[RMDB]
RNA sequence: GGGAACGACUCGAGUAGAGUCGAAAACGGGGUUGUAGGACCACGUCAUAUUCGACCAUACUGGAUAGUAGAACAGCCUGGAAAGGCUGGCCGGAGAAGGUGAAAGCCCUGUAGACGAAAUCCAGAGUCGACGACAAUGGUUCGCCAUUGUCGUCGAAAAAGAAACAACAACAACAAC
Reactivity to 2A3 in 0.01 (KOAc 150mM, MgCl2 10mM, bicine 150mM(pH8.5), 24C), signal-to-noise 2, nucleotides 027 to 126: c010g000g030g010g070u090u030g220u300a090g150g150a010c020c000a030c050g030u010c030a020u070a150u130u090c040g100a060c140c000a060u040a090c030u000g000g000a000u030a020g000u000a010g010a000a000c000a000g000c000c000u000g020g040a030a020a020g000g000c020u000g000g000c010c000g030g010a030g000a000a000g030g000u000g000a000a000a000g000c000c000c000u000g020u000a000g000a000c000g020a110a160a000u030c030c000a000g000a040g020
Reactivity to DMS in 0.01 (KOAc 150mM, MgCl2 10mM, bicine 150mM(pH8.5), 24C), signal-to-noise 2, nucleotides 027 to 126: c000g000g010g060g000u050u000g040u050a070g000g000a060c040c020a000c050g000u000c140a120u000a150u000u010c010g010a010c040c090a250u000a160c000u010g010g000a000u000a200g000u000a120g000a000a000c000a000g000c000c000u000g000g010a300a020a000g000g000c000u000g050g040c010c000g000g000a000g000a100a000g010g030u000g000a000a220a100g000c000c020c010u010g000u020a280g000a010c010g000a000a120a150u000c000c030a010g020a120g000
Chemical mapping of a 177-nucleotide RNA with 2A3 and DMS. For DMS the reverse transcriptase was MarathonRT. For DMS, 1,681 sequencing reads were counted. 2A3 adducts were read by reverse transcription with SuperScript II with manganese. It was measured as part of the RMDB library RFM100.